[RMDB]
RNA sequence: GGGAACGACUCGAGUAGAGUCGAAAACAAUCAAUUCUUGCGGAGAACUGUGAAUGCGCAAACCAACCCUUGGCCAUCGCGUCCGCCAUCUCCAGCAGCCGCACGCGGCGCAUCUCGGGCAGCGUUGGCUGAGGUGGAGGUUCGCCUCCACCUCAGCAAAAGAAACAACAACAACAAC
Reactivity to 2A3 in 0.01 (KOAc 150mM, MgCl2 10mM, bicine 150mM(pH8.5), 24C), signal-to-noise 1, nucleotides 027 to 126: c040a020a100u190c020a020a040u170u010c010u050u120g000c040g020g000a090g070a200a190c100u080g090u130g110a090a060u120g020c060g040c150a090a020a060c010c000a030a020c020c020c000u010u040g020g000c010c020a020u040c000g010c000g020u030c000c020g030c070c010a110u050c070u030c080c010a000g000c030a020g030c000c010g030c000a110c130g030c000g000g000c010g000c000a090u060c030u020c120g000g000g000c030a160g020c180g010u040u040g000
Reactivity to DMS in 0.01 (KOAc 150mM, MgCl2 10mM, bicine 150mM(pH8.5), 24C), signal-to-noise 2, nucleotides 027 to 126: c150a080a050u020c170a080a020u000u020c040u000u010g030c050g000g030a140g030a100a060c080u020g000u010g000a070a070u000g030c000g000c070a080a060a120c050c010a000a190c090c040c050u010u010g000g000c000c010a080u000c020g020c020g030u000c000c040g010c180c040a000u000c140u000c080c030a120g030c000a150g030c020c000g020c120a080c300g020c000g020g030c010g030c030a030u010c050u030c050g000g020g000c020a070g020c040g000u010u000g000
The data come from the RNA Mapping Database (RMDB), library OK2TRN. Structure probing data (2A3 and DMS) for a 177-nucleotide construct. The reactions ran in a buffer of 150 mM KOAc, 10 mM MgCl2 and 150 mM bicine (pH 8.5), at 24 C.